[RMDB]
RNA sequence: GGGAACGACUCGAGUAGAGUCGAAAAGGAACUGCUGAGUCAGAUAUACAGAAGAACAGUCACUGCGAGGGCUGUUAAACUCUCAGGAAAGGUACCAAAGUGCAUGGCAGCGUUUGGCCCCAGUGAGCCACCGUGUGAAAUUCGUUUCACACGGUGGAAAAGAAACAACAACAACAAC
Reactivity to DMS in 0.01 (KOAc 150mM, MgCl2 10mM, bicine 150mM(pH8.5), 24C), signal-to-noise 2, nucleotides 027 to 126: g030g010a080a090c040u010g000c020u000g010a050g000u000c140a070g000a090u000a100u010a090c110a090g030a140a140g010a080a040c050a010g000u000c010a090c010u010g000c100g020a140g000g000g000c020u010g000u020u000a000a060a160c110u000c010u000c020a020g010g010a050a110a130g000g000u000a090c050c000a050a100a110g030u000g020c030a050u010g010g010c070a050g000c050g010u010u000u000g000g000c090c010c030c020a100g000u050g010a090g010
Reactivity to 2A3 in 0.01 (KOAc 150mM, MgCl2 10mM, bicine 150mM(pH8.5), 24C), signal-to-noise 1, nucleotides 027 to 126: g030g020a020a070c020u000g020c030u020g040a000g130u160c040a010g110a030u120a000u020a090c010a040g110a110a030g050a020a100c000a010g050u000c000a020c130u200g100c140g060a300g000g040g000c000u000g000u010u000a020a010a000c030u000c000u000c000a010g000g130a090a050a030g000g000u100a090c010c060a040a090a000g100u090g000c030a030u120g070g000c010a020g070c060g000u020u020u100g050g010c000c000c000c000a050g090u060g060a000g020